This 177-nucleotide RNA was probed chemically with DMS and 2A3.
2A3 adducts were read by reverse transcription with SuperScript II with manganese.
DMS adducts were read by reverse transcription with MarathonRT.
RNA sequence: GGGAACGACUCGAGUAGAGUCGAAAAUAUCACUGGGCCCACCCCGCACCAGGGAGGAUGGAAGCAGGUAGAGCAGAGCCGGAGCCAGGUGCAGGCCAUUGGAGAGAAGGUCUCCUUGGCCCAGGCCUGCUCUUUCAUACUUCGGUAUGAAAGAGCAAAAAGAAACAACAACAACAAC
Reactivity to DMS in 0.01 (KOAc 150mM, MgCl2 10mM, bicine 150mM(pH8.5), 24C), signal-to-noise 4, nucleotides 027 to 126: u000a050u010c090a110c050u000g020g020g020c090c020c080a200c130c010c020c070g020c070a080c050c050a070g010g010g010a040g000g000a090u010g020g010a100a160g010c070a070g000g020u010a050g010a070g000c050a060g000a170g010c020c030g000g000a110g010c020c010a040g000g010u000g030c130a110g000g010c010c000a100u010u000g020g010a100g000a110g010a130a070g000g010u000c000u000c000c010u000u000g010g000c000c000c000a040g000g000c000c040
Reactivity to 2A3 in 0.01 (KOAc 150mM, MgCl2 10mM, bicine 150mM(pH8.5), 24C), signal-to-noise 2, nucleotides 027 to 126: u050a010u040c030a010c060u020g060g030g000c000c050c020a060c000c020c000c020g020c030a060c050c030a000g020g010g040a060g090g000a050u090g090g030a060a030g020c020a020g080g130u180a070g020a020g070c040a010g010a030g050c000c000g030g050a020g040c020c000a010g030g010u060g000c050a000g000g000c030c000a060u050u170g030g030a110g020a010g020a300a130g080g070u000c000u000c000c000u030u010g020g000c000c020c000a000g000g000c000c000